The data come from the RNA Mapping Database (RMDB), library OK2TST. Chemical mapping of a 177-nucleotide RNA with 2A3 and DMS. The RNA was probed in 150 mM KOAc, 10 mM MgCl2 and 150 mM bicine (pH 8.5) at 24 C. For 2A3, 626 sequencing reads were counted. DMS adducts were read by reverse transcription with MarathonRT. 2A3 adducts were read by reverse transcription with SuperScript II with manganese.
RNA sequence: GGGAACGACUCGAGUAGAGUCGAAAAGAGAUAAAAAGGGAAGAAAGAGGAAGAUCAGGUGUAGGAUUAACUCUACCUUUUGAUGGGCGAUAUUUAUCACACCAAUUGAGACUUUUCGGGAUUAAUAACAACAACCUAGGUUCGCCUAGGUUGUUGUAAAAGAAACAACAACAACAAC
Reactivity to 2A3 in 0.01 (KOAc 150mM, MgCl2 10mM, bicine 150mM(pH8.5), 24C), signal-to-noise 1, nucleotides 027 to 126: g000a010g000a000u060a030a090a000a020a000g110g010g010a050a110g080a040a160a010g000a010g040g020a060a110g010a090u000c030a020g000g050u070g020u060a010g020g010a010u010u030a040a040c000u020c040u100a080c020c000u070u000u120u060g150a140u090g010g010g020c030g000a020u040a130u060u180u020a050u060c000a030c000a000c080c030a020a070u040u110g030a050g060a100c040u150u030u180u110c040g060g000g070a040u210u120a090a130u210a030
Reactivity to DMS in 0.01 (KOAc 150mM, MgCl2 10mM, bicine 150mM(pH8.5), 24C), signal-to-noise 2, nucleotides 027 to 126: g000a110g000a150u010a060a040a020a060a070g000g000g030a090a090g000a040a050a060g010a040g000g000a080a140g030a060u000c090a050g010g000u000g000u010a080g000g010a110u000u010a070a170c100u000c020u000a140c020c000u000u000u000u020g030a050u010g030g000g000c190g000a050u000a080u000u000u000a010u000c070a030c090a050c040c030a040a100u000u010g010a170g000a070c080u020u000u000u030c050g030g010g000a140u010u000a070a080u010a140